[RMDB]
RNA sequence: GGGAACGACUCGAGUAGAGUCGAAAAGUAUGUUACGAUUAUGUGACUAGCCAUAAUCGAUGAAGGUACUCGACUUCAUCGUAACAUAGAAUUGUCAGUGGGUACUGGCUAGUCACAGUACCGCAGACUACACUCCUAGUCUGCCACUGACUAGGAGCUAGUGAUCGUCAUUCGUGACGAUCACUAGAAAAGAAACAACAACAACAAC
Reactivity to 2A3 in 0.01 (KOAc 150mM, MgCl2 10mM, bicine 150mM(pH8.5), 24C), signal-to-noise 6, nucleotides 027 to 156: g080u060a050u220g040u050u080a030c030g010a060u090u070a080u220g000u000g000a000c000u010a000g000c000c000a070u120a110a090u140c040g010a010u020g010a010a010g090g010u110a090c040u040c100g080a060c020u010u000c000a000u000c000g020u010a010a010c020a030u120a070g160a140a140u160u170g110u150c080a040g070u100g060g070g040u100a070c060u030g000g010c000u000a010g000u010c000a000c000a000g000u000a010c000c020g020c030a030g020a040c020u050a040c060a020c020u000c000c000u000a000g000u010c010u060g130c030c020a060c060u030g000a000c000u000a000g010g000a000g000
Reactivity to DMS in 0.01 (KOAc 150mM, MgCl2 10mM, bicine 150mM(pH8.5), 24C), signal-to-noise 3, nucleotides 027 to 156: g010u010a000u000g030u000u000a020c020g020a050u000u010a130u020g030u000g030a070c020u000a020g010c110c010a100u000a100a170u000c030g000a050u000g000a020a000g040g010u000a190c190u010c110g030a120c020u000u000c020a030u000c010g020u010a040a070c050a060u000a130g000a130a170u010u000g020u000c030a150g000u000g020g040g030u000a050c130u000g000g010c020u000a020g030u000c010a060c010a000g000u000a020c010c020g010c030a080g000a050c040u000a070c100a210c030u010c040c000u020a030g010u000c000u000g030c110c060a000c080u010g000a020c010u000a020g010g010a050g000
The record gives the reactivity of an RNA of 207 nucleotides to 2A3 and DMS. The RNA was probed in 150 mM KOAc, 10 mM MgCl2 and 150 mM bicine (pH 8.5) at 24 C. For 2A3, 6,645 sequencing reads were counted. 2A3 adducts were read by reverse transcription with SuperScript II with manganese.